[RMDB]
RNA sequence: GGGAACGACUCGAGUAGAGUCGAAAAUUUUAUUACUGCCAAUCCGGCAUGGAGUAAGGCAGUCUUUAUUUCGCCUUACAAUUCACAGAAUGCUGUGUCUCGUUCAAUGCUGGGUCUUACCACUCAGGUACUCAUAACUCUUCGGAGUUAUGAGUACAAAAGAAACAACAACAACAAC
Reactivity to DMS in 0.01 (KOAc 150mM, MgCl2 10mM, bicine 150mM(pH8.5), 24C), signal-to-noise 2, nucleotides 027 to 126: u000u010u000u010a120u020u010a140c040u000g000c080c050a110a160u000c010c010g000g010c080a010u000g000g010a120g020u010a060a060g010g010c020a110g000u000c100u010u000u020a100u000u000u000c090g010c020c010u000u000a030c050a150a060u000u010c020a050c000a060g030a170a100u020g020c030u000g000u000g000u000c070u000c120g010u010u000c110a080a080u010g000c020u000g000g010g020u010c030u010u000a160c110c130a090c090u010c070a090g050
Reactivity to 2A3 in 0.01 (KOAc 150mM, MgCl2 10mM, bicine 150mM(pH8.5), 24C), signal-to-noise 2, nucleotides 027 to 126: u010u010u000u080a130u060u100a070c040u020g040c000c030a030a040u020c010c000g120g000c090a050u110g000g010a100g010u070a040a010g000g000c020a020g020u010c020u110u280u060a260u030u090u070c050g000c000c010u000u000a000c000a030a050u010u020c010a010c020a020g150a250a170u230g100c020u000g010u010g040u020c020u000c040g130u220u060c060a080a060u020g000c010u030g010g000g000u000c000u050u080a030c010c020a030c050u090c030a020g100

This 177-nucleotide RNA was probed chemically with DMS and 2A3. High 2A3 reactivity points to a flexible backbone, as in loops and unpaired stretches. The data come from the RNA Mapping Database (RMDB), library 15KREP. For 2A3 the reverse transcriptase was SuperScript II with manganese.